This 177-nucleotide RNA was probed chemically with DMS and 2A3. The data come from the RNA Mapping Database (RMDB), library OK1LIB. DMS adducts were read by reverse transcription with MarathonRT.
RNA sequence: GGGAACGACUCGAGUAGAGUCGAAAACAUUAUUUAACUAUUGUGAUAGUGUGGUUGGUCCACCAACAUAUUGCGAGUACUUUAUGUUUAUGAGUAAGCCGGAAGAACCAUUGCAAUAGCGAGGGCAGUAAGCUGGAGAGUUCGCUCUCCAGCUUACAAAAGAAACAACAACAACAAC
Reactivity to DMS in 0.01 (KOAc 150mM, MgCl2 10mM, bicine 150mM(pH8.5), 24C), signal-to-noise 1, nucleotides 027 to 126: c060a040u010u010a090u010u000u030a060a090c040u000a100u020u050g000u020g010a000u000a000g020u000g050u000g000g000u000u000g000g000u000c080c090a140c090c110a040a060c030a000u000a020u030u000g000c000g030a110g000u020a090c010u000u020u000a030u030g010u020u020u000a000u000g000a140g060u040a000a080g000c000c020g010g000a090a020g060a120a020c140c070a020u000u020g060c060a070a110u000a020g040c060g020a110g000g020g000c050a090
Reactivity to 2A3 in 0.01 (KOAc 150mM, MgCl2 10mM, bicine 150mM(pH8.5), 24C), signal-to-noise 3, nucleotides 027 to 126: c060a040u120u180a120u210u190u110a030a030c020u010a060u030u080g010u020g000a090u040a160g120u150g030u030g070g030u030u060g080g070u080c080c000a040c000c030a060a000c000a030u060a000u030u110g120c170g150a070g130u080a070c030u050u020u000a020u020g020u060u020u040a100u150g080a070g130u060a050a020g040c020c010g050g040a110a000g090a100a020c060c000a010u010u100g000c000a030a010u010a030g000c000g050a020g000g130g000c010a030